[RMDB]
RNA sequence: GGGAACGACUCGAGUAGAGUCGAAAAGCUCUGUAAUGGGAUGGGAUCCGAAGCCCCAUUGGGGGAUAAUACAGGCUCUCCCAUCCAACUCCUAUUCCAACACGUCCUCGUCGUACAGAGUGGUAACUAAGGUAUAGCUCCUUCGGGAGCUAUACAACCCAUUAGUUAACUUCGGUUAACUAAUGGGAAAAGAAACAACAACAACAAC
Reactivity to DMS in 0.01 (KOAc 150mM, MgCl2 10mM, bicine 150mM(pH8.5), 24C), signal-to-noise 2, nucleotides 027 to 156: g000c000u000c030u010g020u000a030a100u000g040g000g010a050u000g000g000g000a060u000c010c050g000a170a230g000c020c000c010c020a300u000u010g040g000g070g020g010a050u000a050a110u000a140c120a280g030g040c070u000c120u000c000c010c010a090u000c010c020a050a060c050u000c010c020u000a110u000u000c050c030a060a080c050a130c040g000u000c040c020u000c060g020u000c000g000u000a040c040a040g000a030g020u030g000g010u010a070a110c100u010a060a150g000g020u000a000u000a010g010c000u000c000c010u000u000c300g020g020g020a010g030c000u000a000u000a000c020a050a090
Reactivity to 2A3 in 0.01 (KOAc 150mM, MgCl2 10mM, bicine 150mM(pH8.5), 24C), signal-to-noise 3, nucleotides 027 to 156: g010c010u010c020u050g060u070a150a130u160g100g000g010a000u010g000g000g000a050u210c000c010g040a100a040g010c000c000c010c030a180u100u220g080g000g010g000g020a040u110a090a050u150a180c160a040g000g000c000u000c000u000c000c000c000a000u000c010c000a000a000c010u010c000c010u040a070u090u100c010c020a040a030c010a040c110g080u060c010c040u090c060g070u050c030g000u030a010c010a010g010a030g010u060g020g030u080a120a080c100u040a220a020g080g010u000a010u000a010g000c010u000c000c000u020u020c070g050g000g000a000g010c000u010a000u000a000c000a000a000

Description
Conditions: 150 mM KOAc, 10 mM MgCl2 and 150 mM bicine (pH 8.5), 24 C. The record gives the reactivity of an RNA of 207 nucleotides to DMS and 2A3. In probing experiments dimethyl sulfate is read out at A N1 and C N3, which are open when not base-paired. Source: RMDB library M2RFPK, as collected in RNAgym. 2A3 adducts were read by reverse transcription with SuperScript II with manganese. The 2A3 profile rests on 1,667 reads.